[RMDB]
RNA sequence: GGGAACGACUCGAGUAGAGUCGAAAAAGAGACAGACUAGCUAGGUGAUCAGUGAGUGUAUAUCAUGGCGAGCAGUACCUAGGCGAUCCAUGAGUACAUCUCAUGCGCGGUACAGAUGGAUCAUCUAUAGUUCCUACUGAUUCGUCAGUAGGAACUAAAAAGAAACAACAACAACAAC
Reactivity to DMS in 0.01 (KOAc 150mM, MgCl2 10mM, bicine 150mM(pH8.5), 24C), signal-to-noise 7, nucleotides 027 to 126: a060g010a100g010a070c090a080g010a120c080u000a080g010c170u000a030g020g020u000g000a030u010c030a140g020u000g000a030g020u000g000u000a020u000a100u000c010a010u000g010g010c030g010a300g010c030a070g000u010a130c160c110u000a120g010g010c020g000a190u000c010c000a010u010g000a050g000u000a010c020a020u010c010u000c010a020u000g010c090g010c070g020g000u010a100c130a090g010a120u010g000g000a020u000c020a020u000c020u000a070
Reactivity to 2A3 in 0.01 (KOAc 150mM, MgCl2 10mM, bicine 150mM(pH8.5), 24C), signal-to-noise 4, nucleotides 027 to 126: a010g130a010g010a010c030a020g070a040c050u090a050g090c020u020a000g040g000u020g030a020u030c030a030g010u010g030a020g010u020g020u010a020u010a020u050c020a010u010g000g000c020g020a020g000c010a010g070u160a110c030c070u110a090g080g120c000g010a010u020c010c000a000u020g020a010g000u020a010c010a040u060c010u000c020a030u060g020c120g010c060g070g040u120a080c040a070g100a110u210g080g010a010u030c010a010u010c030u020a070
The record gives the reactivity of an RNA of 177 nucleotides to DMS and 2A3. DMS adducts were read by reverse transcription with MarathonRT. 2A3 adducts were read by reverse transcription with SuperScript II with manganese. The RNA was probed in 150 mM KOAc, 10 mM MgCl2 and 150 mM bicine (pH 8.5) at 24 C. It was measured as part of the RMDB library OK2TRN.